[RMDB]
RNA sequence: GGGAACGACUCGAGUAGAGUCGAAAAGAUAUGGAUCCCGAGAGCGAGGAUCUCGGAUCGGAAACGAUCCGAGGGGAGCUCGAGGGAUCCUAAGUCAAACGUCAAACCGGUUCGCCGGUUUGACGAACACGUAUGUCUAGUUCGCUAGACAUACGUGAAAAGAAACAACAACAACAAC
Reactivity to DMS in 0.01 (KOAc 150mM, MgCl2 10mM, bicine 150mM(pH8.5), 24C), signal-to-noise 4, nucleotides 027 to 126: g010a010u000a040u010g000g000a010u000c000c000c010g000a300g010a020g020c000g010a120g000g010a030u000c000u010c000g000g010a010u000c000g030g000a020a010a020c000g000a010u000c000c000g010a020g000g000g010g010a100g020c000u000c000g000a300g000g000g020a000u000c010c000u000a000a060g000u000c010a080a110a200c020g000u000c000a000a010a000c000c000g010g010u000u010c240g020c000c000g010g000u010u010u000g000a000c000g000a060a110
Reactivity to 2A3 in 0.01 (KOAc 150mM, MgCl2 10mM, bicine 150mM(pH8.5), 24C), signal-to-noise 2, nucleotides 027 to 126: g000a000u010a000u050g000g000a000u000c000c000c030g010a030g010a000g030c060g030a250g100g060a010u000c010u010c010g010g010a020u000c000g000g000a000a010a000c020g010a010u000c000c000g010a010g000g000g030g070a080g000c010u000c000g000a010g000g020g000a010u000c000c000u000a000a000g000u000c020a050a050a060c010g000u010c000a000a010a000c000c000g000g080u080u080c300g060c050c000g000g000u000u010u000g010a000c010g000a020a000
Description
Conditions: 150 mM KOAc, 10 mM MgCl2 and 150 mM bicine (pH 8.5), 24 C. This 177-nucleotide RNA was probed chemically with DMS and 2A3. Reactivities are given for positions 27 through 126. DMS adducts were read by reverse transcription with MarathonRT. It was measured as part of the RMDB library TTRDEL.